Notes: An RNA of 177 nucleotides, treated with 2A3 and DMS and read out base by base. The data come from the RNA Mapping Database (RMDB), library OK2TST. DMS adducts were read by reverse transcription with MarathonRT. For DMS, 6,067 sequencing reads were counted. Values cover nucleotides 27 to 126.
RNA sequence: GGGAACGACUCGAGUAGAGUCGAAAAUAAUAAGCACGAGUAGAAGUCGAACUGGGCUCAGCAGUACGACCUCGCAGUGUUUUACGCGAGAAACGUUGAGGUUUGGUAACUGAAUGACCGCUGCCUGGUCUACACAAGUUUUCGAACUUGUGUAGACAAAAGAAACAACAACAACAAC
Reactivity to 2A3 in 0.01 (KOAc 150mM, MgCl2 10mM, bicine 150mM(pH8.5), 24C), signal-to-noise 3, nucleotides 027 to 126: u080a000a000u060a050a000g050c010a000c040g050a050g060u080a090g060a120a000g020u030c030g000a040a020c020u030g010g100g000c040u030c080a050g030c000a000g040u030a020c010g020a010c010c010u000c000g000c040a020g020u010g040u040u040u050u070a020c020g020c000g030a040g030a050a080a000c050g020u040u100g060a050g070g000u060u150u140g090g010u070a080a030c040u050g080a060a060u090g040a020c000c030g010c040u030g020c000c010u060g060
Reactivity to DMS in 0.01 (KOAc 150mM, MgCl2 10mM, bicine 150mM(pH8.5), 24C), signal-to-noise 5, nucleotides 027 to 126: u000a090a090u010a050a040g020c030a030c030g010a120g030u000a090g030a050a060g010u000c020g010a100a040c030u000g000g010g000c070u010c110a100g010c010a030g010u010a080c030g010a050c040c010u000c000g020c060a120g010u010g010u000u010u000u000a050c090g010c050g000a060g010a070a080a060c090g020u000u000g010a120g010g010u000u010u000g030g000u010a060a060c050u000g010a070a090u000g000a080c070c010g000c070u000g010c010c040u010g010